RNA sequence: GGGAACGACUCGAGUAGAGUCGAAAAUAGUUGCACUGAAGGCGUAUGGCGAUGUAUGCUGGAGCGGCUAGAAAAGCAAAUGUAGGCAUAAGUAACGAUAAAGGGGGCGAGAAACCCCCUCGCCGUAACUGUUGAUAUGAUUCGUCAUAUCAACAGUAAAAGAAACAACAACAACAAC
Reactivity to DMS in 0.01 (KOAc 150mM, MgCl2 10mM, bicine 150mM(pH8.5), 24C), signal-to-noise 9, nucleotides 027 to 126: u010a030g020u010u000g010c030a210c120u030g010a180a110g000g000c020g020u000a030u010g010g010c100g010a080u020g010u000a020u000g000c010u000g000g010a080g020c050g010g000c010u000a050g000a070a080a100a090g020c080a040a070a080u030g010u010a100g000g000c030a090u010a060a080g010u020a090a070c080g000a080u020a080a100a040g010g000g000g010g010c010g010a140g010a070a090a200c000c000c000c010c000u000c010g010c060c010g000u010a080
Reactivity to 2A3 in 0.01 (KOAc 150mM, MgCl2 10mM, bicine 150mM(pH8.5), 24C), signal-to-noise 9, nucleotides 027 to 126: u080a010g030u010u030g020c030a040c140u050g040a060a010g040g000c010g010u040a020u070g100g010c050g030a030u140g010u050a010u040g000c010u020g010g040a040g020c020g010g000c010u030a030g140a060a130a020a000g050c060a030a060a100u170g030u090a050g040g000c020a010u020a090a060g080u060a100a030c060g040a050u080a110a060a020g000g000g000g000g010c030g010a070g120a070a070a050c000c000c000c000c000u000c000g000c000c000g030u050a020

Chemical mapping of a 177-nucleotide RNA with DMS and 2A3.
The RNA was probed in 150 mM KOAc, 10 mM MgCl2 and 150 mM bicine (pH 8.5) at 24 C.
It was measured as part of the RMDB libraries RFM100 and RFMREP.
For DMS the reverse transcriptase was MarathonRT.